[RMDB]
RNA sequence: GGGAACGACUCGAGUAGAGUCGAAAACACUACCUGGUUGCUGCUACCGCGCCAGAUAAGCGCCGGGUCUUUCAGAUCCUGCACAAAUUUGCCAUCGACCAGCACGUUGAUGAGAUCGACUACCUGCCCUAAAUAGGGAGUUCGCUCCCUAUUUAGGAAAAGAAACAACAACAACAAC
Reactivity to 2A3 in 0.01 (KOAc 150mM, MgCl2 10mM, bicine 150mM(pH8.5), 24C), signal-to-noise 9, nucleotides 027 to 126: c080a020c040u120a100c010c010u010g040g000u070u300g020c020u030g030c040u090a080c040c050g010c000g000c010c000a030g020a080u150a060a060g030c040g000c050c040g030g010g000u000c010u050u280u090c060a030g000a050u020c010c000u030g000c040a020c040a040a150a080u120u130u150g040c010c000a020u030c010g030a040c020c010a040g050c050a030c120g040u040u050g040a060u050g020a030g030a120u080c040g040a030c020u060a070c010c020u050g020c010
Reactivity to DMS in 0.01 (KOAc 150mM, MgCl2 10mM, bicine 150mM(pH8.5), 24C), signal-to-noise 5, nucleotides 027 to 126: c160a130c140u020a070c080c000u000g010g000u000u030g040c050u000g000c040u010a070c120c070g020c060g010c070c050a020g010a050u010a060a150g000c090g000c010c030g010g000g020u000c020u000u010u030c170a080g010a050u010c010c020u000g010c050a060c080a040a070a090u010u010u000g000c020c010a040u010c040g010a070c020c040a070g010c100a080c150g010u000u000g010a040u010g000a080g000a140u030c030g010a070c050u020a090c040c000u000g000c130